[RMDB]
RNA sequence: GGGAACGACUCGAGUAGAGUCGAAAAUUAAUACUGCUACAUUUUUAAGACCGUUAGUUAUUUAGCUUUACCGCCCAGGAUGGGGUGCAGCGUUCCUGCAAUAUCCAGGGCACCUAGGUGCAGCCUUCAUGCCUCAUGCCGUUCGCGGCAUGAGGAACCUAUUUGCCUAGUUCGCUAGGCAAAUAGGAAAAGAAACAACAACAACAAC
Reactivity to 2A3 in 0.01 (KOAc 150mM, MgCl2 10mM, bicine 150mM(pH8.5), 24C), signal-to-noise 2, nucleotides 027 to 156: u070u030a030a150u050a110c040u090g030c020u090a010c030a160u100u080u080u120u210a090a030g030a060c040c000g030u070u050a040g030u140u050a130u110u210u180a050g040c030u050u080u040a040c050c010g030c000c000c000a000g030g000a010u020g030g050g080g010u020g010c030a000g000c030g070u090u120c010c000u000g000c000a000a010u060a000u110c000c000a010g000g010g000c000a040c000c030u030a020g070g030u020g000c010a020g060c000c050u020u070c050a090u110g030c000c000u010c000a000u000g000c000c020g000u010u010c260g020c020g080g000c000a000u000g000a000g000g000a000a000

Annotation
An RNA of 207 nucleotides, treated with 2A3 and read out base by base. 2A3 adducts were read by reverse transcription with SuperScript II with manganese. The RNA was probed in 150 mM KOAc, 10 mM MgCl2 and 150 mM bicine (pH 8.5) at 24 C. It was measured as part of the RMDB library M2RFPK. For 2A3, 897 sequencing reads were counted. Values cover nucleotides 27 to 156.